[RMDB]
RNA sequence: GGGAACGACUCGAGUAGAGUCGAAAAAUAGGAAGAGAUGAAGAAAUUCGAAAUACGAUUCGUAUUUUAAGUCGUAAAACUAAAAACAACCCUGUGCUCAUUGGUGAACCAGGUGUUGGUAAAACUGCUACUAUAGCGCUUUCGAGCGCUAUAGUAGAAAAGAAACAACAACAACAAC
Reactivity to 2A3 in 0.01 (KOAc 150mM, MgCl2 10mM, bicine 150mM(pH8.5), 24C), signal-to-noise 4, nucleotides 027 to 126: a000u130a020g050g070a070a060g070a030g030a040u030g050a120a300g050a070a120a030u090u070c020g020a030a030a050u300a120c170g110a160u030u050c030g020u030a060u000u050u040u030a110a040g010u010c030g000u040a010a040a090a070c060u130a040a040a030a020a020c010a010a000c030c000c020u060g130u210g030c010u030c040a100u020u300g300g000u160g150a020a010c000c000a020g030g000u170g060u080u000g030g010u040a050a050a020a050c010u030g010
Reactivity to DMS in 0.01 (KOAc 150mM, MgCl2 10mM, bicine 150mM(pH8.5), 24C), signal-to-noise 2, nucleotides 027 to 126: a070u010a020g000g000a070a090g020a180g000a060u000g020a090a140g000a060a030a050u000u000c010g000a010a040a120u060a080c300g000a150u010u010c030g020u000a010u010u010u010u000a030a300g000u000c000g000u030a110a120a050a050c070u000a020a030a080a130a060c060a050a030c020c000c000u000g020u030g020c020u000c020a140u020u030g010g030u020g010a010a000c020c000a000g010g000u040g030u000u000g000g000u010a040a020a040a070c110u000g000
Overview:
Chemical mapping of a 177-nucleotide RNA with 2A3 and DMS. Source: RMDB library OK1LIB, as collected in RNAgym. For DMS, 3,045 sequencing reads were counted. 2A3 is a SHAPE reagent: it acylates the 2'-hydroxyl of flexible nucleotides of all four kinds. Conditions: 150 mM KOAc, 10 mM MgCl2 and 150 mM bicine (pH 8.5), 24 C.